[RMDB]
Description
An RNA of 207 nucleotides, treated with DMS and 2A3 and read out base by base. Values cover nucleotides 27 to 156. The data come from the RNA Mapping Database (RMDB), library OK3TST. DMS adducts were read by reverse transcription with MarathonRT. As a SHAPE reagent, 2A3 marks flexible, mostly unpaired nucleotides at the ribose 2'-OH.

RNA sequence: GGGAACGACUCGAGUAGAGUCGAAAAUCUUUACUUGCUGUAAAGCAUCUGGCCCAUUCUGUGCCAAACACGCAAUGCUCCGCACGAACAACAUCCAGUACUACUGUAGCGGCAAGCCACAUAACAUCCAGGCUAUCAAAGUCAAGUACUGCACUAACUUCCAUGCAAUAUUCGUAUUGCAUGGAAGAAAAGAAACAACAACAACAAC
Reactivity to DMS in 0.01 (KOAc 150mM, MgCl2 10mM, bicine 150mM(pH8.5), 24C), signal-to-noise 2, nucleotides 027 to 156: u010c010u000u000u000a070c040u000u010g010c020u000g000u000a090a130a140g020c050a050u030c020u000g020g000c000c030c020a300u000u000c030u010g020u000g000c000c040a060a160a140c050a050c030g030c090a070a160u000g010c030u000c060c050g090c060a120c030g040a130a080c050a040a110c060a300u000c080c000a080g020u000a040c060u000a120c050u000g010u000a100g010c030g000g010c090a050a060g010c050c050a100c040a100u000a050a130c120a130u000c040c030a120g000g020c030u000a110u000c040a110a070a070g000u000c030a050a090g000u000a010c060u000g020c010a110c140u010a050a100
Reactivity to 2A3 in 0.01 (KOAc 150mM, MgCl2 10mM, bicine 150mM(pH8.5), 24C), signal-to-noise 7, nucleotides 027 to 156: u020c010u020u080u040a060c020u050u140g080c050u090g060u110a040a070a030g010c010a060u050c050u090g050g000c020c030c010a030u150u080c080u160g060u060g010c020c030a060a120a060c070a030c060g030c050a040a110u110g030c020u010c040c010g070c010a030c060g050a130a020c040a040a020c010a090u050c030c010a020g020u040a070c020u020a030c030u060g040u110a040g040c010g020g010c050a050a010g020c000c010a050c000a100u170a150a050c010a050u120c060c010a040g030g000c020u050a070u140c090a120a060a020g030u030c010a030a010g010u010a030c030u030g070c050a030c060u080a120a040